[RMDB]
RNA sequence: GGGAACGACUCGAGUAGAGUCGAAAACGCCGCGUUAUCCCGCAGCGGUUGUGGCGGGCAAUGUGGAGGUGAGCCAGGCCGUCACCAACUGCCUCUUUGGCGCAACCGGGGCCAUGGCGGCGGCACACCUCCUCAUGGUAUUCGUACCAUGAGGAGGAAAAGAAACAACAACAACAAC
Reactivity to DMS in 0.01 (KOAc 150mM, MgCl2 10mM, bicine 150mM(pH8.5), 24C), signal-to-noise 7, nucleotides 027 to 126: c050g010c010c000g020c010g010u000u000a140u000c020c020c030g020c090a090g000c020g000g010u000u000g040u000g010g020c030g010g000g000c200a030a040u010g010u000g000g000a060g010g010u000g000a100g010c070c110a140g000g010c010c010g000u000c010a030c040c040a080a080c060u010g000c010c010u000c140u000u020u010g010g010c010g000c070a050a060c030c020g000g000g000g010c040c140a130u000g000g010c010g010g010c010g000g010c090a090c230a090
Reactivity to 2A3 in 0.01 (KOAc 150mM, MgCl2 10mM, bicine 150mM(pH8.5), 24C), signal-to-noise 5, nucleotides 027 to 126: c010g000c000c010g010c030g060u100u100a300u300c020c020c010g010c070a060g160c020g050g000u030u060g000u010g090g180c050g000g000g000c020a040a070u200g000u050g060g060a060g020g020u020g020a040g060c040c040a080g120g000c020c020g080u010c010a010c020c000a040a050c050u030g010c010c010u120c060u160u170u180g090g010c010g000c030a010a030c020c010g000g030g000g000c010c020a010u020g040g000c020g000g000c000g000g000c020a020c010a020